Structure probing data (DMS and 2A3) for a 207-nucleotide construct. The DMS profile rests on 4,754 reads. Values cover nucleotides 27 to 156. The RNA was probed in 150 mM KOAc, 10 mM MgCl2 and 150 mM bicine (pH 8.5) at 24 C. For DMS the reverse transcriptase was MarathonRT. The data come from the RNA Mapping Database (RMDB), library M2RFPK.

RNA sequence: GGGAACGACUCGAGUAGAGUCGAAAACGUUGUCAUCGACAACACCCUAUGCAUUCAUGCUCUGUAAGGAUGCUCCGAAAGGUGAGCAAGCCCGAGUUGCCCAGACCUGAAAUGCAACACUUUAGAGAAAACCCGAAGCAGUUCGCUGCUUCGGGAAUCUACUUACUAAGUUCGCUUAGUAAGUAGAAAAAGAAACAACAACAACAAC
Reactivity to DMS in 0.01 (KOAc 150mM, MgCl2 10mM, bicine 150mM(pH8.5), 24C), signal-to-noise 2, nucleotides 027 to 156: c110g000u000u000g020u000c030a160u020c080g000a080c030a050a070c010a150c020c000c000u000a100u000g010c010a050u000u010c070a130u020g010c000u010c010u010g010u000a150a080g000g030a200u000g010c030u010c020c060g030a140a130a110g020g030u010g000a060g020c010a100a150g020c000c010c020g000a150g020u010u010g010c080c050c030a060g010a080c040c060u000g000a090a090a080u000g000c030a090a130c000a130c050u010u010u000a120g010a190g000a110a070a120a180c000c000c020g000a030a000g000c010a050g040u000u010c300g020c000u020g010c000u000u000c010g010g000g010a000a000
Reactivity to 2A3 in 0.01 (KOAc 150mM, MgCl2 10mM, bicine 150mM(pH8.5), 24C), signal-to-noise 5, nucleotides 027 to 156: c090g000u010u000g010u020c100a250u130c290g020a000c000a010a000c000a060c010c010c010u070a100u060g010c000a000u020u000c010a010u060g040c070u020c010u000g080u080a040a060g000g010a020u010g000c010u000c000c030g200a300a140a070g180g050u190g050a010g000c010a030a040g000c010c000c010g100a070g110u170u220g100c050c040c010a000g010a020c010c040u030g010a040a080a030u020g010c010a040a050c010a030c050u210u230u160a120g020a010g040a090a100a050a070c020c000c000g010a000a000g000c000a000g000u040u110c130g050c130u000g000c000u000u000c000g000g000g000a000a000